[RMDB]
RNA sequence: GGGAACGACUCGAGUAGAGUCGAAAAGUAUGGAGAGUUGAUGCAAGCUGUCGCUGAUGGACUUGAAUCAACUGAUCAGGAUGAGCUAACACUCUCUACUGAGGAUCUUCGUUUUCACUACGCAAUGGGUAUCGCCUACGGAAAAAACGACCCCAGCUGAGAGUAGUAUUUUCGAAUACUACUCUCAAAAAGAAACAACAACAACAAC
Reactivity to DMS in 0.01 (KOAc 150mM, MgCl2 10mM, bicine 150mM(pH8.5), 24C), signal-to-noise 4, nucleotides 027 to 156: g010u000a070u000g020g000a110g010a090g030u000u000g000a040u000g000c010a020a030g020c010u000g020u000c050g050c130u000g020a100u000g020g010a050c010u010u000g000a030a020u000c020a030a040c020u010g010a100u000c010a070g010g010a150u000g010a080g020c040u000a100a090c100a100c020u000c020u000c030u000a120c020u000g000a060g010g000a100u000c050u000u000c020g000u000u000u000u010c040a150c010u000a110c030g000c050a060a100u010g020g010g020u000a080u010c170g000c030c010u020a090c000g000g020a000a040a020a040a030a040c030g010a170c040c010c000c030a090g030c110
Reactivity to 2A3 in 0.01 (KOAc 150mM, MgCl2 10mM, bicine 150mM(pH8.5), 24C), signal-to-noise 7, nucleotides 027 to 156: g090u080a080u230g040g010a050g000a000g070u040u040g040a060u040g030c040a030a000g010c010u020g020u040c060g060c300u160g020a020u060g020g050a150c040u050u090g020a040a070u070c050a060a030c050u060g020a090u030c010a010g070g020a040u130g090a040g020c040u080a120a010c020a020c040u020c000u000c000u030a030c010u010g020a050g030g040a050u030c040u050u020c080g020u020u000u020u050c070a060c070u170a040c080g020c060a080a200u120g010g020g030u110a120u160c040g060c010c010u040a060c040g010g000a060a050a000a050a000a030c010g090a030c010c090c090c010a020g040c050